[RMDB]
The record gives the reactivity of an RNA of 177 nucleotides to 2A3 and DMS. 2A3 adducts were read by reverse transcription with SuperScript II with manganese.
RNA sequence: GGGAACGACUCGAGUAGAGUCGAAAAGAUAUGGAACGGCACAGGGAGAAGUGUAUCGGAAACGAUACGUCUUCGACGAUCUGUGACCGUUCCUAAGUCAAAACCUAGAAACUUCGGUUUCUAGGAAGCUACUGUAUUACUUCGGUAAUACAGUAGCAAAAGAAACAACAACAACAAC
Reactivity to 2A3 in 0.01 (KOAc 150mM, MgCl2 10mM, bicine 150mM(pH8.5), 24C), signal-to-noise 3, nucleotides 027 to 126: g010a000u060a030u120g010g000a010a010c010g020g000c010a010c010a010g030g050g020a130g000a030a010g010u000g000u020a000u010c000g000g000a070a040a020c010g000a000u010a010c010g120u050c020u010u010c000g300a190c020g030a040u020c000u000g000u020g010a010c010c000g000u000u000c000c000u000a000a010g000u010c020a000a040a090a160c010c000u000a000g010a010a000a000c010u050u090c300g110g000u000u010u000c000u010a000g010g000a010a010
Reactivity to DMS in 0.01 (KOAc 150mM, MgCl2 10mM, bicine 150mM(pH8.5), 24C), signal-to-noise 5, nucleotides 027 to 126: g020a040u010a300u010g000g000a010a010c000g000g000c000a010c000a000g000g000g000a030g010a010a010g020u000g000u010a000u000c000g000g000a130a060a260c000g010a020u000a000c000g020u010c000u000u000c000g000a100c300g000a040u010c000u000g010u000g000a110c000c020g000u010u000c000c000u000a000a080g010u000c040a130a070a140a200c010c000u000a010g010a020a000a010c000u000u020c260g050g000u000u000u000c000u000a010g000g000a030a050

For DMS the reverse transcriptase was MarathonRT. For DMS, 6,293 sequencing reads were counted. It was measured as part of the RMDB library TTRDES. The reactions ran in a buffer of 150 mM KOAc, 10 mM MgCl2 and 150 mM bicine (pH 8.5), at 24 C.